[RMDB]
Source information:
The record gives the reactivity of an RNA of 177 nucleotides to DMS and 2A3.
RNA sequence: GGGAACGACUCGAGUAGAGUCGAAAACAGAUGCCGUUCGCGGCAUCUGAAAGUGACGGUGAAAAAUGGCCAAGGUGCCAGCUACCACCGACACAGGGCGCAAAAGAGGAUUCUUCGGAAUCCUCAAGUCAGGUAAACAGUUCGCUGUUUACCUGACAAAAGAAACAACAACAACAAC
Reactivity to DMS in 0.01 (KOAc 150mM, MgCl2 10mM, bicine 150mM(pH8.5), 24C), signal-to-noise 2, nucleotides 027 to 126: c010a000g000a010u000g030c000c000g030u000u010c220g060c030g000g010c010a000u000c000u040g000a020a040a110g020u010g020a150c000g000g050u000g000a000a040a080a200a070u000g010g000c000c020a190a190g010g020u010g020c000c000a000g020c090u010a190c120c000a000c020c000g010a060c030a000c010a240g000g010g000c120g000c190a090a030a070a080g010a000g000g020a010u000u010c000u000u010c140g020g000a000a010u000c000c000u010c000a000a010
Reactivity to 2A3 in 0.01 (KOAc 150mM, MgCl2 10mM, bicine 150mM(pH8.5), 24C), signal-to-noise 1, nucleotides 027 to 126: c000a000g010a000u000g000c060c010g090u050u050c200g030c010g100g000c010a000u000c000u000g020a030a010a020g000u000g000a010c000g000g000u030g030a110a010a020a060a080u020g020g000c030c080a300a290g220g050u300g040c000c000a020g000c000u000a040c030c020a000c000c000g000a000c020a000c000a000g060g100g010c130g010c070a050a160a100a020g010a000g000g000a010u000u000c020u000u110c210g010g000a010a030u000c000c000u000c010a000a000
The reactions ran in a buffer of 150 mM KOAc, 10 mM MgCl2 and 150 mM bicine (pH 8.5), at 24 C. For DMS, 1,222 sequencing reads were counted. For DMS the reverse transcriptase was MarathonRT.